[RMDB]
Notes:
The record gives the reactivity of an RNA of 207 nucleotides to 2A3. The 2A3 profile rests on 839 reads. Values cover nucleotides 27 to 156.

RNA sequence: GGGAACGACUCGAGUAGAGUCGAAAAUCUCGCUGCCUAAGCGAUGGCUAGUCUGUCAGACCGGGAACGCCCUCGUCCCGGAGCCUGGCAUCAGCUAGAGGGAUCUACCGAUGGGUUCGGUCGCGGGACUCGUCGGGACACCAACCGCGACUGGGAUCCUUUAUCUCUUCUUCGGAAGAGAUAAAGGAAAAGAAACAACAACAACAAC
Reactivity to 2A3 in 0.01 (KOAc 150mM, MgCl2 10mM, bicine 150mM(pH8.5), 24C), signal-to-noise 1, nucleotides 027 to 156: u010c000u010c020g040c040u040g020c000c060u110a150a000g090c030g070a070u040g020g000c030u060a020g080u080c070u080g010u010c020a000g010a030c010c000g030g000g000a050a050c060g050c020c020c020u070c000g010u010c000c000c010g010g010a010g040c020c010u010g010g000c030a180u050c030a100g120c030u210a010g000a000g030g020g000a010u030c070u180a010c000c010g010a010u030g000g000g030u010u010c020g070g000u000c000g000c000g010g020g000a000c000u000c020g000u010c010g030g000g000a010c030a000c030c140a250a070c040c010g000c000g050a000c010u040g030g000g050a050u030